Conditions: 150 mM KOAc, 10 mM MgCl2 and 150 mM bicine (pH 8.5), 24 C. An RNA of 177 nucleotides, treated with DMS and 2A3 and read out base by base. High 2A3 reactivity points to a flexible backbone, as in loops and unpaired stretches.

RNA sequence: GGGAACGACUCGAGUAGAGUCGAAAACUUGUACACACCGCCCGUCGCUCCUACCGACUGGGCGCGGCGGCGAGCGUCCCGGACCGGAAGGGCCGCGAGCCCCCGCGCCUGGAGGAAGGAGAAGUCGCAGACGUAGUUAGUUCGCUAACUACGUCUGAAAAGAAACAACAACAACAAC
Reactivity to DMS in 0.01 (KOAc 150mM, MgCl2 10mM, bicine 150mM(pH8.5), 24C), signal-to-noise 5, nucleotides 027 to 126: c060u000u010g020u000a080c070a090c050a080c050c040g000c030c020c030g020u040c080g030c040u000c000c000u010a100c020c000g020a180c020u000g010g000g030c030g030c010g000g030c300g000g000c000g000a220g010c010g000u020c010c010c000g000g010a240c130c190g000g020a150a140g000g000g000c090c010g010c030g000a300g000c000c000c130c020c010g000c020g030c010c000u000g030g010a300g000g010a150a020g000g010a050g000a020a090g010u000c100g000
Reactivity to 2A3 in 0.01 (KOAc 150mM, MgCl2 10mM, bicine 150mM(pH8.5), 24C), signal-to-noise 3, nucleotides 027 to 126: c020u050u130g110u190a030c050a010c010a020c060c030g030c020c020c010g060u060c050g010c020u000c000c000u010a100c020c010g300a300c080u010g010g000g000c000g000c000g000g000c000g000g000c010g000a000g000c000g000u000c000c000c000g020g110a150c120c090g080g070a080a030g030g000g000c000c000g000c000g000a010g000c000c000c000c000c000g000c000g000c000c000u000g010g000a000g010g000a000a000g010g010a010g000a020a030g060u040c040g000